[RMDB]
Description:
The record gives the reactivity of an RNA of 207 nucleotides to DMS and 2A3. As a SHAPE reagent, 2A3 marks flexible, mostly unpaired nucleotides at the ribose 2'-OH.

RNA sequence: GGGAACGACUCGAGUAGAGUCGAAAAAACGUUUAAGCCUCUAAACAUAUCAGACCUGUUUUCCUGCAUUCCACAUCUACAGCUUACCUGUACCCUAAAGAACAUAAAGGAAACAGAUAAGUGUCAAGAAGCCUUCAGUGGUACUUCUUCCAUGGAAGGAUAUUUUAGCAUUCGUGCUAAAAUAUCCAAAAGAAACAACAACAACAAC
Reactivity to DMS in 0.01 (KOAc 150mM, MgCl2 10mM, bicine 150mM(pH8.5), 24C), signal-to-noise 2, nucleotides 027 to 156: a090a080c040g040u000u010u000a060a120g020c000c020u010c030u010a130a150a190c090a080u000a060u020c020a080g040a040c020c020u030g020u000u010u000u010c000c040u000g020c050a130u000u000c060c050a140c080a120u010c010u000a060c040a090g000c010u000u000a060c040c000u000g020u000a140c040c010c010u000a050a100a130g000a060a080c170a140u000a130a150a060g030g010a080a090a070c030a010g020a000u020a050a070g040u000g020u030c050a080a070g000a050a040g000c020c020u000u000c110a110g040u000g010g020u000a020c030u000u000c030u000u010c050c060a050u020g000g030a150a190
Reactivity to 2A3 in 0.01 (KOAc 150mM, MgCl2 10mM, bicine 150mM(pH8.5), 24C), signal-to-noise 3, nucleotides 027 to 156: a000a000c180g000u170u130u030a070a020g060c030c000u010c050u080a040a170a080c030a060u160a030u220c080a030g080a070c010c020u070g010u000u020u020u000c010c010u010g010c040a060u050u020c050c020a090c000a140u050c070u140a030c030a050g040c010u020u000a010c000c000u010g010u070a060c000c000c000u150a190a160a020g080a120a040c080a060u150a090a130a010g030g020a060a090a040c000a010g000a010u030a070a020g030u010g030u080c030a010a010g010a020a010g030c000c000u110u080c100a170g090u030g120g000u040a110c020u020u010c000u050u030c050c010a100u080g060g030a040a040